An RNA of 177 nucleotides, treated with DMS and 2A3 and read out base by base.
The RNA was probed in 150 mM KOAc, 10 mM MgCl2 and 150 mM bicine (pH 8.5) at 24 C.
Reactivities are given for positions 27 through 126.
The 2A3 profile rests on 730 reads.
RNA sequence: GGGAACGACUCGAGUAGAGUCGAAAACUGUCGAGUUCUUGAAGAACCCGAACGCUUCUAACGAACCUGAGAAGCCGAAGUUCACUGAGAAGGCGUUGCAGAACGCGACUGAAGGUGUCGAGAAGUAUGAAGUCGAGCAAUUCGUUGCUCGACUUCAAAAAGAAACAACAACAACAAC
Reactivity to DMS in 0.01 (KOAc 150mM, MgCl2 10mM, bicine 150mM(pH8.5), 24C), signal-to-noise 2, nucleotides 027 to 126: c090u000g000u000c000g000a030g000u000u020c040u020u120g000a020a160g000a020a130c000c040c000g010a100a120c110g010c070u000u000c000u030a060a170c030g010a130a010c000c030u020g010a130g000a090a120g010c120c020g000a050a060g000u030u010c080a140c060u060g030a010g000a280a210g000g030c000g000u030u110g000c060a050g000a010a000c130g020c000g000a030c010u020g000a300a130g000g030u000g000u020c040g010a050g000a060a050g010u000a180
Reactivity to 2A3 in 0.01 (KOAc 150mM, MgCl2 10mM, bicine 150mM(pH8.5), 24C), signal-to-noise 2, nucleotides 027 to 126: c000u010g000u050c000g030a020g030u020u020c020u150u300g160a300a190g010a070a080c000c000c010g010a120a030c050g000c000u000u000c000u000a070a000c010g010a010a010c000c000u140g040a050g000a150a000g050c000c010g000a080a030g100u160u090c080a210c180u160g110a030g020a140a050g030g060c000g000u020u130g000c000a000g040a300a020c100g040c000g020a000c000u010g080a030a040g120g000u000g000u040c010g000a000g000a020a000g010u050a080